[RMDB]
An RNA of 177 nucleotides, treated with DMS and read out base by base. Source: RMDB library OK2TRN, as collected in RNAgym.
RNA sequence: GGGAACGACUCGAGUAGAGUCGAAAAGUGGAUUCCAUAAGGUUCCUGCCUACCAUCGGCUUUAAAGAAAAAAAUAGGCCCGGACGGGUUAGCAACAAGCGACUGCCGGUGCCAACAGCGCAAUCCACUAGUGUUUGUAAUUCGUUACAAACACUAGAAAAGAAACAACAACAACAAC
Reactivity to DMS in 0.01 (KOAc 150mM, MgCl2 10mM, bicine 150mM(pH8.5), 24C), signal-to-noise 3, nucleotides 027 to 126: g000u010g000g010a100u010u000c030c030a120u010a120a110g010g010u000u010c010c010u000g010c040c020u000a090c120c050a030u010c080g000g000c020u000u000u000a040a100a160g010a020a020a040a120a060a120a150u000a240g000g000c030c010c020g000g020a060c080g010g020g030u000u000a010g040c030a090a100c240a060a200g010c020g000a040c020u000g000c010c010g010g040u010g040c010c020a050a080c090a040g010c040g000c080a030a060u010c030c060a100
The reactions ran in a buffer of 150 mM KOAc, 10 mM MgCl2 and 150 mM bicine (pH 8.5), at 24 C.